[RMDB]
RNA sequence: GGGAACGACUCGAGUAGAGUCGAAAACUCGGCAAGGGGCGGCAGUCCUCAGUGCUCUUACUCUUUCCUAUAAAGAGGAGACUGCUGGACUCGCCGCCCGAGCCCGAGCAUGGGCCCCAGUUCCGAACAACACGCUGCUUCGGCAGCGUGAAAAGAAACAACAACAACAAC
Reactivity to 2A3 in 0.01 (KOAc 150mM, MgCl2 10mM, bicine 150mM(pH8.5), 24C), signal-to-noise 2, nucleotides 027 to 129: c050u000c000g000g000c070a130a070g000g050g040g030c030g000g040c000a000g000u000c000c000u040c010a030g000u150g180c000u000c020u020u220a140c000u050c040u030u040u000c040c100u140a060u120a260a010a000g000a000g030g000a000g020a000c000u000g060c040u000g000g030a030c000u000c020g000c000c010g000c000c000c000g020a000g000c000c000c050g000a000g010c040a110u200g050g040g000c000c000c000c000a000g000u020u070c010c000g050a080a020c040a090a000
Reactivity to DMS in 0.01 (KOAc 150mM, MgCl2 10mM, bicine 150mM(pH8.5), 24C), signal-to-noise 3, nucleotides 027 to 129: c040u000c000g010g010c020a120a120g010g090g040g000c030g070g000c020a000g010u010c020c000u010c000a060g000u030g050c080u010c000u010u090a300c100u000c000u000u000u070c300c250u000a150u060a040a000a030g010a060g000g000a070g000a080c020u000g000c210u020g000g000a050c000u010c210g040c050c010g000c000c000c000g010a000g010c090c000c000g010a010g010c110a040u000g040g040g000c000c000c010c050a120g000u090u010c010c050g070a000a000c210a090a200

An RNA of 170 nucleotides, treated with 2A3 and DMS and read out base by base. DMS adducts were read by reverse transcription with MarathonRT. The 2A3 profile rests on 2,250 reads. For 2A3 the reverse transcriptase was SuperScript II with manganese. Values cover nucleotides 27 to 129. The reactions ran in a buffer of 150 mM KOAc, 10 mM MgCl2 and 150 mM bicine (pH 8.5), at 24 C.